[RMDB]
An RNA of 177 nucleotides, treated with 2A3 and DMS and read out base by base. The 2A3 profile rests on 18,532 reads. Conditions: 150 mM KOAc, 10 mM MgCl2 and 150 mM bicine (pH 8.5), 24 C.

RNA sequence: GGGAACGACUCGAGUAGAGUCGAAAAGGCGCGCCAGUACGACUGCACCGCCAAGCUGGCCGAGGGCAUGCUCAUGGUGCUGCCGCGACAGAGCGGGCAGAGCGCCACGGGGCGUCGGAUCGAACCACUCAUGGCUAUUAUUCGUAAUAGCCAUGAGAAAAGAAACAACAACAACAAC
Reactivity to 2A3 in 0.01 (KOAc 150mM, MgCl2 10mM, bicine 150mM(pH8.5), 24C), signal-to-noise 7, nucleotides 027 to 126: g010g000c010g010c060g150c030c020a050g020u050a010c020g020a020c030u020g010c050a240c300c000g000c010c010a060a030g060c020u020g020g000c080c010g030a110g020g020g060c020a030u240g010c040u050c110a220u260g200g010u160g070c010u010g000c010c000g040c000g000a010c020a020g040a010g020c010g000g000g000c010a000g030a070g020c000g000c040c030a020c040g000g000g000g020c010g000u020c020g010g010a050u090c050g050a030a060c010c010a020
Reactivity to DMS in 0.01 (KOAc 150mM, MgCl2 10mM, bicine 150mM(pH8.5), 24C), signal-to-noise 8, nucleotides 027 to 126: g000g000c010g020c020g010c030c010a200g020u000a090c060g010a050c030u000g030c020a140c030c020g010c020c140a100a090g010c030u000g000g010c060c010g010a070g010g000g010c020a020u010g040c010u010c140a190u010g020g010u000g010c020u000g000c000c010g010c010g000a060c070a040g000a080g000c010g000g000g000c010a030g000a120g010c020g010c040c050a060c080g010g000g000g010c010g010u000c010g010g000a220u010c130g000a120a180c040c050a260